Chemical mapping of a 177-nucleotide RNA with 2A3 and DMS.
The DMS profile rests on 1,055 reads.
The 2A3 profile rests on 1,199 reads.
The data come from the RNA Mapping Database (RMDB), library RFMREP.
RNA sequence: GGGAACGACUCGAGUAGAGUCGAAAAACUAACGGGCGACGACUGCGUCCCUGUUCUUUGUACACACCGCCCGUCGUUAUCUAAGAUGGUGCUAUGUUCGAAGAGGGUUUUCCUUCUGAGGACGUAGGUCAUAAGGGUGGUUCGCCACCCUUAUGACAAAAGAAACAACAACAACAAC
Reactivity to 2A3 in 0.01 (KOAc 150mM, MgCl2 10mM, bicine 150mM(pH8.5), 24C), signal-to-noise 2, nucleotides 027 to 126: a030c040u040a020a000c000g010g000g060c050g030a010c000g050a060c130u180g060c130g060u000c020c000c020u010g150u120u020c040u050u090u130g080u090a000c080a010c040a000c080c030g030c020c040c000g010u050c030g020u050u090a070u110c050u150a070a060g030a120u140g050g050u030g000c000u000a000u020g000u000u000c000g000a020a000g010a010g090g050g000u050u050u170u220c000c010u000u030c000u010g010a000g000g000a000c000g000u000a000g020
Reactivity to DMS in 0.01 (KOAc 150mM, MgCl2 10mM, bicine 150mM(pH8.5), 24C), signal-to-noise 2, nucleotides 027 to 126: a040c080u010a110a050c090g000g000g020c070g000a110c020g010a160c140u020g020c120g020u000c010c000c050u000g000u010u000c060u000u000u000g020u020a120c090a140c080a060c070c040g000c000c030c010g060u030c030g000u000u000a070u000c170u000a060a070g010a030u000g000g010u020g030c000u000a000u000g020u000u000c020g030a270a030g000a020g000g020g010u010u000u010u030c000c000u000u000c000u000g000a300g010g000a010c000g010u000a010g000